The record gives the reactivity of an RNA of 177 nucleotides to DMS and 2A3.
The 2A3 profile rests on 923 reads.
[RMDB]
RNA sequence: GGGAACGACUCGAGUAGAGUCGAAAAAGAGGAGAGUGGCAGGCGACUAGUUGAGUACGAGGGUGUCGAGACACACCGCAUGGUGAGCAAGGAGCCAGAGAAGUACCUGGUGCUGGUCGACAUAAGGUAACUGUCUUUCCUUCGGGAAAGACAGUUAAAAAGAAACAACAACAACAAC
Reactivity to DMS in 0.01 (KOAc 150mM, MgCl2 10mM, bicine 150mM(pH8.5), 24C), signal-to-noise 3, nucleotides 027 to 126: a070g010a120g020g000a130g000a030g020u000g010g020c080a040g020g010c070g020a050c060u010a060g000u010u000g010a080g000u000a060c080g010a120g000g000g000u000g000u000c040g020a130g020a110c210a130c060a020c000c010g020c190a070u020g020g010u000g000a110g010c080a090a050g020g010a110g010c010c010a020g010a140g010a050a100g000u000a070c080c050u010g000g010u000g010c040u000g020g010u000c020g000a030c120a040u020a080a080g020g000
Reactivity to 2A3 in 0.01 (KOAc 150mM, MgCl2 10mM, bicine 150mM(pH8.5), 24C), signal-to-noise 1, nucleotides 027 to 126: a030g040a010g040g000a080g000a010g080u040g010g040c060a020g040g030c020g050a020c030u000a020g090u070u070g050a020g080u050a020c030g020a040g050g120g000u080g030u010c040g050a020g070a050c050a000c010a010c020c050g000c030a080u170g050g000u030g020a030g000c040a060a060g100g000a020g050c020c000a010g010a000g010a150a000g060u070a010c000c050u050g020g010u000g040c020u080g030g040u030c070g000a060c020a040u180a040a040g080g000